The record gives the reactivity of an RNA of 177 nucleotides to 2A3 and DMS. Values are in units of 0.01, from 0 to 300, in steps of 10. It was measured as part of the RMDB library OK2TST. Conditions: 150 mM KOAc, 10 mM MgCl2 and 150 mM bicine (pH 8.5), 24 C.
RNA sequence: GGGAACGACUCGAGUAGAGUCGAAAAAUAGUCGUCUUCGGCGCAGGCACCGCAGGGAUGGGGAUCGCCGAUCAGAUCCGGGACGCGAUGGUGGCAGACGGUGCCACGCUCGAGCAGGCGGUGUCCCGAUGUGUCUCAUCUUCGGAUGAGACACAUCAAAAGAAACAACAACAACAAC
Reactivity to 2A3 in 0.01 (KOAc 150mM, MgCl2 10mM, bicine 150mM(pH8.5), 24C), signal-to-noise 2, nucleotides 027 to 126: a000u070a000g040u010c020g010u000c000u040u010c030g010g010c030g010c120a300g020g020c020a010c010c010g000c030a040g000g060g050a130u120g090g010g000g060a030u040c010g020c070c050g060a080u080c040a020g070a060u060c060c070g020g020g030a020c030g010c020g030a040u100g040g110u100g020g000c070a030g040a160c040g030g040u000g000c030c000a000c000g020c010u160c030g030a040g040c100a030g000g000c000g020g010u000g040u030c010c010c000
Reactivity to DMS in 0.01 (KOAc 150mM, MgCl2 10mM, bicine 150mM(pH8.5), 24C), signal-to-noise 2, nucleotides 027 to 126: a030u000a060g000u000c020g020u000c020u000u000c020g000g010c020g020c090a140g020g010c000a010c000c010g040c080a270g000g010g000a150u000g000g020g030g000a060u000c030g000c050c050g000a150u010c110a080g010a080u000c110c060g010g000g000a210c230g030c040g000a050u000g020g000u000g000g030c040a120g000a140c030g000g020u000g020c000c000a080c010g000c040u010c030g000a030g000c190a080g020g010c010g000g020u000g000u000c000c020c010